An RNA of 177 nucleotides, treated with 2A3 and DMS and read out base by base.
RNA sequence: GGGAACGACUCGAGUAGAGUCGAAAAGUCCCUGCUGCCCGUGCCCCGGGACGUCCUGGAGACAGAGGAUGAGGAGCCUCCACCAAGGCGCUGGUGCAACACCUGCCAGCUCUACUACAUGGGGGACGCCAUGUGGAAAUUUCGAUUUCCACAUGGCAAAAGAAACAACAACAACAAC
Reactivity to 2A3 in 0.01 (KOAc 150mM, MgCl2 10mM, bicine 150mM(pH8.5), 24C), signal-to-noise 4, nucleotides 027 to 126: g030u020c000c000c000u010g020c040u050g000c000c010c000g090u090g030c020c020c010c030g030g010g010a030c020g030u020c000c010u020g070g010a040g020a050c060a040g060a030g060g000a090u120g050a060g100g060a020g010c000c000u030c020c010a060c010c020a080a020g020g000c040g010c030u020g000g050u040g050c090a150a020c020a070c050c030u060g000c010c000a020g010c020u020c020u090a140c010u060a020c000a100u070g020g000g010g020g000a000c040
Reactivity to DMS in 0.01 (KOAc 150mM, MgCl2 10mM, bicine 150mM(pH8.5), 24C), signal-to-noise 3, nucleotides 027 to 126: g000u010c010c000c010u000g010c030u010g020c020c000c020g030u020g020c020c050c020c020g060g020g000a070c080g000u020c000c030u010g020g030a190g030a100c120a050g000a040g010g000a050u020g040a120g010g000a190g000c000c030u000c020c030a040c070c090a080a090g000g000c150g000c010u000g000g010u000g000c160a110a130c080a090c170c010u000g000c010c030a040g000c010u010c030u020a140c060u040a060c130a160u020g010g020g020g000g000a080c180

The 2A3 profile rests on 4,512 reads. For DMS the reverse transcriptase was MarathonRT. The reactions ran in a buffer of 150 mM KOAc, 10 mM MgCl2 and 150 mM bicine (pH 8.5), at 24 C.